[RMDB]
RNA sequence: GGGAACGACUCGAGUAGAGUCGAAAACACAUUCUAUUCGUAGAAUGUGGAACGUAGAGAGAUCGACAGCGUCGCACCUAUGUCGAACGAGGAAGAGCGCGCAGGGAUCGGGCUUCGGCCCGAUCAAAACACUAACAAGGUUCGCCUUGUUAGUGUUAAAAGAAACAACAACAACAAC
Reactivity to 2A3 in 0.01 (KOAc 150mM, MgCl2 10mM, bicine 150mM(pH8.5), 24C), signal-to-noise 6, nucleotides 027 to 126: c000a000c000a000u010u000c000u010a030u040u090c150g080u030a000g000a010a000u000g000u010g010g020a060a020c040g070u150a030g020a010g010a010g010a180u070c040g060a040c030a060g030c010g070u180c160g010c020a050c010c010u090a110u190g140u140c120g080a150a120c080g010a040g040g030a050a050g020a010g050c010g000c010g010c030a020g070g070g000a010u000c000g000g000g000c000u050u080c150g100g000c000c000c000g000a000u000c000a000a010
Reactivity to DMS in 0.01 (KOAc 150mM, MgCl2 10mM, bicine 150mM(pH8.5), 24C), signal-to-noise 9, nucleotides 027 to 126: c000a010c000a000u000u000c000u000a020u010u010c180g020u000a010g000a010a000u000g010u000g000g000a090a060c140g010u010a070g000a100g000a130g010a100u000c030g000a080c090a120g000c070g010u010c070g020c070a100c050c040u000a060u010g010u000c130g010a050a140c160g000a060g000g000a050a060g010a080g000c020g010c050g010c080a120g000g000g000a010u000c000g010g000g010c000u000u010c200g040g000c000c000c000g010a000u000c010a030a040
The record gives the reactivity of an RNA of 177 nucleotides to 2A3 and DMS. As a SHAPE reagent, 2A3 marks flexible, mostly unpaired nucleotides at the ribose 2'-OH. The RNA was probed in 150 mM KOAc, 10 mM MgCl2 and 150 mM bicine (pH 8.5) at 24 C. Values are in units of 0.01, from 0 to 300, in steps of 10. The DMS profile rests on 17,626 reads. Reactivities are given for positions 27 through 126.